[RMDB]
RNA sequence: GGGAACGACUCGAGUAGAGUCGAAAAACGAUAGUGGUGUCAAGACCGAAAAGGGCCUUGAUGAUAAUCGGUUCCAUAUGGAACGCAGGCAUGGUGGAUAGAGUUGUAAGUAUCGCGCUACACAUGUUGGAUUAGAGUUAUUAGUGCAUACCAUUGCAGUGAUGGUUAAAUUCGUUUAACCAUCACUAAAAGAAACAACAACAACAAC
Reactivity to DMS in 0.01 (KOAc 150mM, MgCl2 10mM, bicine 150mM(pH8.5), 24C), signal-to-noise 5, nucleotides 027 to 156: a060c040g000a100u000a080g030u000g000g030u010g020u000c020a020a030g010a040c010c000g000a060a100a170a270g020g020g020c010c010u010u010g010a030u000g020a100u010a060a050u010c030g030g000u000u010c020c020a240u010a110u000g020g020a020a060c040g030c050a090g010g020c030a040u000g000g020u010g000g000a140u010a070g000a090g020u020u000g020u000a050a110g030u000a060u000c060g020c070g020c030u000a060c050a040c080a060u010g020u000u010g020g010a120u000u000a100g000a110g020u000u010a060u000u000a100g010u000g010c030a120u000a090c050c040a130u000u000g010c140
Reactivity to 2A3 in 0.01 (KOAc 150mM, MgCl2 10mM, bicine 150mM(pH8.5), 24C), signal-to-noise 7, nucleotides 027 to 156: a010c060g020a060u070a040g110u060g090g020u060g020u050c030a020a020g020a030c030c020g060a080a130a110a090g050g000g010c030c000u030u030g010a020u070g010a020u110a070a060u080c040g020g020u010u040c010c000a040u080a120u290g020g010a050a020c060g000c090a030g030g000c030a030u050g000g030u020g010g030a060u060a090g040a030g020u020u050g040u080a070a070g010u020a020u080c040g000c010g010c040u050a020c030a000c010a100u100g040u090u080g050g030a100u080u100a080g020a020g100u060u070a090u070u070a050g010u020g010c000a010u020a070c030c050a070u130u120g040c040
This 207-nucleotide RNA was probed chemically with DMS and 2A3. 2A3 adducts were read by reverse transcription with SuperScript II with manganese. The RNA was probed in 150 mM KOAc, 10 mM MgCl2 and 150 mM bicine (pH 8.5) at 24 C.